[RMDB]
RNA sequence: GGGAACGACUCGAGUAGAGUCGAAAAUCUCAGGUCUUCGGACCUGAGAAAAAUAAAAUAAGCUAAUCGUCAAUGCACUACACUGUAGAUAAAGACGACAAAAAAGGACAAUCUUCGGAUUGUCCAACGUAAGUACCUUGUUCGCAAGGUACUUACGAAAAGAAACAACAACAACAAC
Reactivity to 2A3 in 0.01 (KOAc 150mM, MgCl2 10mM, bicine 150mM(pH8.5), 24C), signal-to-noise 3, nucleotides 027 to 126: u000c000u000c010a000g020g010u000c000u030u100c210g100g010a020c000c000u000g000a000g000a000a020a000a010a010u040a030a010a000a010u260a110a060g040c040u050a050a140u010c000g010u000c010a030a040u170g030c050a010c050u040a010c300a050c130u240g020u020a000g000a030u070a040a050a030g010a000c010g010a000c030a000a120a000a010a000a030g000g000a000c010a000a010u000c010u060u110c250g090g000a000u010u000g010u010c000c010a010a000
Reactivity to DMS in 0.01 (KOAc 150mM, MgCl2 10mM, bicine 150mM(pH8.5), 24C), signal-to-noise 3, nucleotides 027 to 126: u000c000u000c000a020g000g000u000c000u010u020c250g020g050a000c000c000u040g010a000g010a000a000a030a090a080u000a080a020a110a090u020a110a120g020c020u000a080a120u000c000g010u000c000a080a110u040g010c070a240c010u000a010c010a130c220u010g010u000a000g000a100u000a010a140a250g010a010c000g000a050c300a020a000a010a040a090a090g010g010a010c000a010a000u000c000u000u010c300g020g000a020u000u020g010u000c000c000a010a020

Source: RMDB library M2PK50, as collected in RNAgym. Structure probing data (2A3 and DMS) for a 177-nucleotide construct. For DMS the reverse transcriptase was MarathonRT. Reactivities are given for positions 27 through 126. 2A3 adducts were read by reverse transcription with SuperScript II with manganese. For 2A3, 3,212 sequencing reads were counted. Values are in units of 0.01, from 0 to 300, in steps of 10.